[RMDB]
RNA sequence: GGGAACGACUCGAGUAGAGUCGAAAAGACGAACGAAAACACAAAUGUUCCACGGUGCAGAAGGGUCCCUCACAAGAGGAUCACCCAUGUAACUCGGACAGGAUAUGCUUUUGGGAAAAAGAGAGAAUGGAACCUAUUGUUUCGACAAUAGGUUCCAAAAAGAAACAACAACAACAAC
Reactivity to DMS in 0.01 (KOAc 150mM, MgCl2 10mM, bicine 150mM(pH8.5), 24C), signal-to-noise 2, nucleotides 027 to 126: g020a100c050g020a240a150c050g030a050a020a050a030c050a050c050a040a130a100u010g000u000u000c000c060a080c200g020g010u000g010c010a050g050a090a150g000g000g030u010c180c020c010u010c000a110c300a110a130g020a000g000g000a030u010c160a030c030c000c010a120u000g010u000a030a030c010u010c220g000g000a020c050a010g000g010a150u020a100u010g010c030u000u000u000u030g010g020g000a040a030a020a040a110g020a140g000a080g010a060a060

An RNA of 177 nucleotides, treated with DMS and read out base by base. The DMS profile rests on 952 reads.